[RMDB]
RNA sequence: GGGAACGACUCGAGUAGAGUCGAAAAUGCGAGUAGUGCUAUUGUUGGAAUCACCGUACCUAUUUAGGUUUACGCUCCAAGAUCGGUGGAUAGCAGCCCUAUCAAUAUCUAGGAGAACUGUGCUAUGAAAACGGUAUUGGCUUCGGCCAAUACCGAAGAUCAUUUUACACUUCGGUGUAAAAUGAUCAAAAGAAACAACAACAACAAC
Reactivity to 2A3 in 0.01 (KOAc 150mM, MgCl2 10mM, bicine 150mM(pH8.5), 24C), signal-to-noise 5, nucleotides 027 to 156: u090g010c040g000a040g050u080a020g030u100g070c040u070a030u090u090g070u020u070g050g060a080a070u120c010a010c030c020g020u040a040c000c010u090a170u200u180u220a030g000g010u030u060u040a030c040g010c030u000c020c030a030a020g010a060u050c030g000g070u010g040g060a020u030a030g020c040a020g020c000c020c000u030a040u060c040a050a060u040a010u190c020u040a020g000g000a020g020a030a030c040u050g030u040g080c030u080a030u190g100a030a090a010a020c000g000g000u000a010u000u000g000g000c000u010u020c140g080g000c000c000a000a000u000a000c000c000g000a000a000
Reactivity to DMS in 0.01 (KOAc 150mM, MgCl2 10mM, bicine 150mM(pH8.5), 24C), signal-to-noise 2, nucleotides 027 to 156: u000g000c070g000a170g000u000a070g030u010g000c020u000a040u000u020g000u000u000g000g010a060a110u000c020a020c020c010g040u010a040c010c000u000a260u000u010u000a070g020g020u000u000u010a040c070g040c030u010c010c000a040a090g010a020u000c070g030g040u010g000g000a100u000a050g000c020a200g000c050c070c020u000a100u000c040a130a140u010a110u000c080u010a030g000g000a060g000a050a060c050u010g010u000g010c060u000a120u000g020a030a030a100a180c020g000g020u000a010u010u000g020g010c010u000u000c300g040g020c010c000a000a020u000a020c000c000g020a010a020
An RNA of 207 nucleotides, treated with 2A3 and DMS and read out base by base. Source: RMDB library M2RFPK, as collected in RNAgym. The RNA was probed in 150 mM KOAc, 10 mM MgCl2 and 150 mM bicine (pH 8.5) at 24 C.